Structure probing data (2A3) for a 207-nucleotide construct. Values are in units of 0.01, from 0 to 300, in steps of 10. Conditions: 150 mM KOAc, 10 mM MgCl2 and 150 mM bicine (pH 8.5), 24 C.
[RMDB]
RNA sequence: GGGAACGACUCGAGUAGAGUCGAAAAACACUUCUAGCCUAUUCAGCAUCGCGUCCUUGAGGCCUGGCGUAACGCGGCUCUUGCCACCAGGAUGCCUCCGCUAGUCGAGCGGACUUGGUCUCUUUCCGCCCAAAGCCCUUUUUCUUUCAUCUGAGCUGAUUACAUCGAGGUUCGCCUCGAUGUAAUCAAAAGAAACAACAACAACAAC
Reactivity to 2A3 in 0.01 (KOAc 150mM, MgCl2 10mM, bicine 150mM(pH8.5), 24C), signal-to-noise 2, nucleotides 027 to 156: a000c040a020c050u080u100c030u080a070g020c000c010u060a150u100u050c070a070g010c000a070u090c050g010c010g050u080c020c000u070u080g050a050g030g030c000c020u050g040g020c040g070u100a040a010c160g020c020g060g000c020u040c000u050u080g060c040c030a060c010c020a040g010g050a190u120g020c020c020u030c000c000g000c020u070a060g180u120c090g020a010g010c020g000g010a000c040u030u060g050g010u050c010u000c000u090u040u060c050c020g000c000c000c000a090a040a040g000c010c000c050u020u040u000u060u070c040u060u090u130c080a190u000c090u090g100a050g100c060u050